[RMDB]
RNA sequence: GGGAACGACUCGAGUAGAGUCGAAAAUAUUGCCAACGCCGCCGAAAGAAUCCUUAAUCUGUCCACCCUGCUGGAUUGCAACCAACCAAACAGGCAUACCGGAAGCCAGCGACGUUACAACGUCAGUGAUCUGAGCCGGAAGCAUUCGCAUGGCCUGGUCUAAAUGAAUGUUCGCAUUCAUUUAGACAAAAGAAACAACAACAACAAC
Reactivity to 2A3 in 0.01 (KOAc 150mM, MgCl2 10mM, bicine 150mM(pH8.5), 24C), signal-to-noise 3, nucleotides 027 to 156: u060a010u020u090g020c010c000a070a050c040g060c020c010g010c000c010g060a110a060a070g050a040a090u090c030c010u090u070a080a070u060c050u070g080u070c030c010a030c020c010c010u020g020c020u020g010g030a090u030u080g000c040a040a060c010c010a030a030c020c020a110a080a050c020a030g000g030c010a000u050a100c020c000g020g010a060a010g050c030c010a010g050c020g020a000c010g000u060u110a050c050a180a030c080g010u010c010a050g030u020g090a090u020c020u060g030a020g040c000c010g020g020a030a020g020c030a070u160u170c050g040c080a050u080g020g010c000c000u060g010
Reactivity to DMS in 0.01 (KOAc 150mM, MgCl2 10mM, bicine 150mM(pH8.5), 24C), signal-to-noise 2, nucleotides 027 to 156: u010a060u000u000g020c020c030a120a150c040g040c020c020g020c030c080g010a070a120a130g000a130a050u000c040c020u000u020a080a100u000c040u000g010u010c050c020a120c060c010c030u000g000c050u020g020g020a140u010u000g020c010a080a150c100c000a040a140c010c020a060a060a170c050a020g020g000c070a150u000a160c020c040g000g020a090a130g010c030c030a070g010c000g010a050c020g010u000u000a070c070a070a090c000g000u000c020a100g020u000g000a080u000c040u000g000a140g060c030c050g030g020a060a080g000c020a110u000u010c070g020c010a160u000g010g020c010c000u000g010

This 207-nucleotide RNA was probed chemically with 2A3 and DMS. It was measured as part of the RMDB library OK3TST.